RNA sequence: GGGAACGACUCGAGUAGAGUCGAAAAUGAGCACCACGGUGUCUGCCGCCGGCUUGCCGGUCUUUUCUUGGAUCACACGAUCUAUUUCCGCGUAGUACUGUGUAGCAUCCGGUGGCAAGAAGUCAGCAACGGCCAAUUAAUUCGUUAAUUGGCCGUUAAAAGAAACAACAACAACAAC
Reactivity to 2A3 in 0.01 (KOAc 150mM, MgCl2 10mM, bicine 150mM(pH8.5), 24C), signal-to-noise 1, nucleotides 027 to 126: u130g040a020g010c070a030c040c070a050c060g100g000u060g030u040c020u070g000c030c000g000c020c020g060g000c110u070u030g000c050c050g000g070u020c050u070u150u050u060c120u120u130g000g030a000u020c000a050c010a000c160g030a030u010c000u030a110u070u100u030c010c050g150c030g030u030a000g020u010a080c030u040g060u060g080u290a030g000c000a000u040c010c000g000g030u020g030g000c020a010a020g010a010a010g040u080c060a000g110c010
Reactivity to DMS in 0.01 (KOAc 150mM, MgCl2 10mM, bicine 150mM(pH8.5), 24C), signal-to-noise 2, nucleotides 027 to 126: u010g040a140g010c060a110c070c070a090c120g040g050u010g020u000c060u000g010c040c010g020c000c000g010g000c160u000u010g010c000c300g030g000u000c020u000u010u000u010c120u000u020g000g000a020u000c020a240c070a070c150g000a080u000c020u000a060u000u000u020c110c070g000c120g020u000a040g020u000a060c070u000g020u000g040u000a050g010c030a040u000c010c000g000g000u020g020g010c010a030a040g010a080a090g000u020c050a090g010c170